An RNA of 177 nucleotides, treated with DMS and 2A3 and read out base by base.
Values cover nucleotides 27 to 126.
[RMDB]
RNA sequence: GGGAACGACUCGAGUAGAGUCGAAAAGAUAUGGAAUUGGCAGCUUUUGACGAAAUAUGUCUCGGAAACGAGACAGAUUUCGAUAAGCUGCAAUUCCUAAGUCAAAAUCGAGCCUUCGGGCUCGAAAUCGAGUAACAUUCUUCGGAAUGUUACUCGAAAAAGAAACAACAACAACAAC
Reactivity to DMS in 0.01 (KOAc 150mM, MgCl2 10mM, bicine 150mM(pH8.5), 24C), signal-to-noise 2, nucleotides 027 to 126: g000a030u000a300u000g000g020a000a000u010u000g020g010c000a000g000c000u000u000u010u010g020a300c220g000a000a000a010u000a040u000g020u010c000u010c000g010g000a080a100a230c000g000a020g000a010c000a010g000a010u000u000u000c000g000a160u010a020a010g020c020u000g010c000a000a000u000u000c010c000u010a070a160g000u000c080a060a090a110a180u010c010g000a020g000c000c010u000u010c300g010g030g030c000u000c000g000a000a020a080
Reactivity to 2A3 in 0.01 (KOAc 150mM, MgCl2 10mM, bicine 150mM(pH8.5), 24C), signal-to-noise 2, nucleotides 027 to 126: g000a030u030a050u210g020g000a010a030u030u070g300g230c000a010g020c020u210u230u180u300g300a200c080g000a010a000a000u030a040u010g000u000c010u000c000g030g000a070a050a040c010g010a000g000a000c000a000g000a000u000u000u000c000g040a040u000a150a000g010c000u000g000c010a000a000u000u000c000c000u000a050a010g040u020c000a040a010a030a300u070c000g000a020g020c020c000u130u180c300g070g000g020c000u000c000g020a000a000a000